The data come from the RNA Mapping Database (RMDB), library 15KLIB. This 170-nucleotide RNA was probed chemically with DMS and 2A3. As a SHAPE reagent, 2A3 marks flexible, mostly unpaired nucleotides at the ribose 2'-OH. For DMS the reverse transcriptase was MarathonRT. 2A3 adducts were read by reverse transcription with SuperScript II with manganese. The 2A3 profile rests on 7,092 reads. The reactions ran in a buffer of 150 mM KOAc, 10 mM MgCl2 and 150 mM bicine (pH 8.5), at 24 C. Reactivities are rounded to 0.1 and cut off at 0 and 3.

[RMDB]
RNA sequence: GGGAACGACUCGAGUAGAGUCGAAAACCUUCCGGAGCCUUCUCUCGAGAUCGUCCGCAUCCUUUCUUGCCUGCACCCACUUUUCGAGGAUGUCUUCCCUUCCUCCCCUCCGGGAUUUCUUCUGAUCGACGGCCAUUCUUCGGAAUGGCCAAAAGAAACAACAACAACAAC
Reactivity to DMS in 0.01 (KOAc 150mM, MgCl2 10mM, bicine 150mM(pH8.5), 24C), signal-to-noise 4, nucleotides 027 to 129: c010c020u030u020c070c060g010g020a110g030c160c020u060u050c050u020c020u020c040g000a030g010a000u030c040g030u030c000c000g050c050a070u040c090c030u010u010u020c000u030u030g000c070c040u010g050c110a150c080c020c020a100c110u000u020u050u010c090g030a070g030g040a070u020g000u010c030u020u030c020c010c030u020u000c030c040u040c040c010c000c060u010c030c080g040g000g000a080u000u060u030c000u000u000c030u000g010a100u050c080g020a110c150
Reactivity to 2A3 in 0.01 (KOAc 150mM, MgCl2 10mM, bicine 150mM(pH8.5), 24C), signal-to-noise 4, nucleotides 027 to 129: c010c000u060u060c030c010g020g000a010g030c000c020u050u040c010u020c000u000c020g010a010g030a200u010c010g020u030c020c010g010c050a080u110c010c070u050u080u070c010u010u050g040c000c010u050g010c020a070c020c030c020a060c060u030u020u070u080c030g040a040g030g050a060u100g040u020c000u020u040c000c000c000u010u040c000c000u010c000c020c010c000u000c000c000g040g000g000a000u030u060u010c000u040u000c030u010g030a090u060c040g070a070c030